[RMDB]
This 177-nucleotide RNA was probed chemically with DMS and 2A3. For 2A3 the reverse transcriptase was SuperScript II with manganese. For DMS the reverse transcriptase was MarathonRT. Conditions: 150 mM KOAc, 10 mM MgCl2 and 150 mM bicine (pH 8.5), 24 C.

RNA sequence: GGGAACGACUCGAGUAGAGUCGAAAAGAUAUGGAAACCAGUGGACAUGAACGCCAUCGGAAACGAUGGGAAGUUCAACAGCCACGGUUUCCUAAGUCAAACUUAGACGAGUUCGCUCGUCUAAGAAUCUAAGAGGGGAGUUCGCUCCCCUCUUAGAAAAAGAAACAACAACAACAAC
Reactivity to DMS in 0.01 (KOAc 150mM, MgCl2 10mM, bicine 150mM(pH8.5), 24C), signal-to-noise 2, nucleotides 027 to 126: g000a040u000a030u020g000g000a020a010a000c000c000a120g060u000g010g000a020c050a120u030g010a000a000c010g010c010c000a000u000c010g020g000a020a020a010c000g010a020u000g020g010g010a080a100g000u000u000c010a160a200c090a170g000c000c000a010c000g000g010u000u000u000c000c000u000a000a060g000u010c000a140a160a240c010u000u000a010g000a010c000g010a020g010u000u020c240g030c000u000c000g010u000c010u000a000a020g000a180a070
Reactivity to 2A3 in 0.01 (KOAc 150mM, MgCl2 10mM, bicine 150mM(pH8.5), 24C), signal-to-noise 1, nucleotides 027 to 126: g010a000u000a000u060g000g000a010a000a000c030c090a140g040u010g000g000a070c180a300u300g000a000a000c030g100c010c000a010u000c010g020g030a020a030a020c010g010a020u010g000g060g000a090a050g010u000u020c060a160a110c160a110g000c000c000a000c000g000g000u000u000u070c000c010u020a000a000g010u000c020a060a060a180c010u010u010a000g020a010c020g000a010g020u110u080c230g140c180u030c000g030u030c010u010a010a010g010a000a070